[RMDB]
RNA sequence: GGGAACGACUCGAGUAGAGUCGAAAAUGUCACACUGUAGCGAGGGAUGCAAUUAAUUGCAUCUACACCAAGCUCAAGGCUUGGAUUUCGACUAGUGUCGAGUCGUUCCCACUCGCUACGCCCACAAUUACGCACGUAUAUUCGUAUACGUGCGUAAAAAAGAAACAACAACAACAAC
Reactivity to DMS in 0.01 (KOAc 150mM, MgCl2 10mM, bicine 150mM(pH8.5), 24C), signal-to-noise 3, nucleotides 027 to 126: u000g020u010c220a160c240a090c160u000g030u000a010g000c010g000a010g010g010g010a020u000g000c010a020a040u000u020a120a080u000u000g010c000a000u000c000u000a070c120a210c010c000a000a010g000c000u000c140a110a080g000g010c000u000u010g000g000a220u000u000u000c010g000a020c010u000a030g000u010g010u000c000g000a000g000u000c000g000u000u000c000c000c000a010c010u000c000g010c000u000a020c020g000c050c010c020a080c150a090a160